[RMDB]
RNA sequence: GGGAACGACUCGAGUAGAGUCGAAAAAUCCUGGCAUUCGUGCCAGGAUGUUUACCGACAAAGUCCCUCGGUAUAAAAGGGCAACCCUUGGAAACAAGGGAAUAAUCGCAGUGUUCGCACUGCGAAACAGGAUACCCAUCUUCGGAUGGGUAUCCUGAAAAGAAACAACAACAACAAC
Reactivity to DMS in 0.01 (KOAc 150mM, MgCl2 10mM, bicine 150mM(pH8.5), 24C), signal-to-noise 1, nucleotides 027 to 126: a000u030c000c000u010g000g020c000a020u000u000c190g000u000g000c010c000a000g030g000a000u000g000u000u000u000a080c000c000g000a090c290a030a060a080g000u050c000c000c000u000c000g000g010u010a130u050a030a030a100a050g000g010g000c040a240a090c010c000c000u000u000g010g000a220a110a150c000a000a000g000g030g000a070a080u000a150a120u010c000g010c000a010g000u000g030u010u000c160g050c000a000c000u000g000c000g010a000a050a110
Annotation
The record gives the reactivity of an RNA of 177 nucleotides to DMS. The reactions ran in a buffer of 150 mM KOAc, 10 mM MgCl2 and 150 mM bicine (pH 8.5), at 24 C. For DMS, 759 sequencing reads were counted. It was measured as part of the RMDB library M2PK50. Values cover nucleotides 27 to 126. For DMS the reverse transcriptase was MarathonRT.